[RMDB]
RNA sequence: GGGAACGACUCGAGUAGAGUCGAAAAAGAUAGCCUGGUAGCCUCGCUCUCUGCUGCUGUCUCGAAUCUCGUGAAGAUCCUGAAGGAUACUGCAGCUAUUGACCUUGAAACUAGUCAGAAGUUUGGGCACAACCACGGAGUUCGCUCCGUGGUUGUGAAAAGAAACAACAACAACAAC
Reactivity to 2A3 in 0.01 (KOAc 150mM, MgCl2 10mM, bicine 150mM(pH8.5), 24C), signal-to-noise 3, nucleotides 027 to 126: a000g200a180u060a060g020c030c020u060g030g030u160a020g010c000c030u000c020g000c010u040c000u000c020u030g020c000u000g000c000u010g050u050c000u030c060g100a100a060u010c010u040c040g080u150g080a080a110g020a110u070c000c030u070g060a130a070g020g000a030u060a120c050u120g060c010a010g000c040u080a060u090u070g030a040c010c020u020u070g050a080a000a060c000u000a000g170u130c030a020g000a040a050g030u080u090u030g010g040g010
Reactivity to DMS in 0.01 (KOAc 150mM, MgCl2 10mM, bicine 150mM(pH8.5), 24C), signal-to-noise 2, nucleotides 027 to 126: a020g000a170u010a080g000c000c040u010g010g000u010a100g000c020c030u000c170g010c010u000c000u000c020u010g000c000u000g010c060u000g010u010c090u000c020g010a100a100u000c100u010c050g010u030g010a080a220g040a070u000c070c030u020g010a180a120g000g000a040u020a030c010u010g000c000a030g000c030u010a110u010u010g000a030c010c070u000u000g030a110a060a180c070u010a090g000u010c030a070g030a070a020g010u000u000u010g000g020g000